Notes
This 207-nucleotide RNA was probed chemically with 2A3 and DMS. Reactivities are given for positions 27 through 156. The RNA was probed in 150 mM KOAc, 10 mM MgCl2 and 150 mM bicine (pH 8.5) at 24 C. For 2A3 the reverse transcriptase was SuperScript II with manganese. The data come from the RNA Mapping Database (RMDB), library OK3TST.
RNA sequence: GGGAACGACUCGAGUAGAGUCGAAAACUAAAUGGGAAAGUAAGGUUUCACAGAUGAGAUAGAAGUUCAAGGUGAAAGAACAGUCUAUAAGGUAAUACCUGCCUGUCUGCAGAGAAUGGAUUCAAGGCUCCUGAUGCAAUUGAAUUAUAGCCUCAUACGAUAAUUAGGCUUUCGAGCCUAAUUAUCGAAAAGAAACAACAACAACAAC
Reactivity to 2A3 in 0.01 (KOAc 150mM, MgCl2 10mM, bicine 150mM(pH8.5), 24C), signal-to-noise 4, nucleotides 027 to 156: c020u080a050a090a150u110g020g000g020a080a050a010g030u100a040a010g070g010u010u070u060c080a050c010a030g070a050u050g010a060g010a080u050a040g070a070a040g030u000u060c030a040a040g080g010u070g040a080a040a010g020a110a010c020a010g030u040c020u100a110u040a200a020g040g000u030a060a070u050a200c020c000u000g020c010c010u050g030u050c030u050g000c030a000g020a000g060a160a060u100g070g000a020u070u040c050a060a030g030g010c010u030c010c040u080g020a050u050g010c020a030a110u060u060g010a030a040u170u060a090u100a070g040c000c050u040c010a050u130a090
Reactivity to DMS in 0.01 (KOAc 150mM, MgCl2 10mM, bicine 150mM(pH8.5), 24C), signal-to-noise 2, nucleotides 027 to 156: c020u000a040a070a100u000g010g010g000a100a050a060g020u010a060a070g030g020u010u000u000c040a090c090a110g010a110u010g000a120g000a100u000a070g010a080a160g000u000u000c020a040a110g010g000u000g020a040a130a130g010a060a050c030a070g010u000c050u000a060u010a090a080g040g020u000a030a070u000a160c060c020u000g000c000c010u010g020u000c040u010g020c060a070g000a090g010a050a100u000g030g000a100u010u000c050a010a150g020g040c050u010c130c050u010g000a070u000g010c040a050a110u000u010g000a080a100u010u010a120u000a110g000c080c080u030c020a060u010a090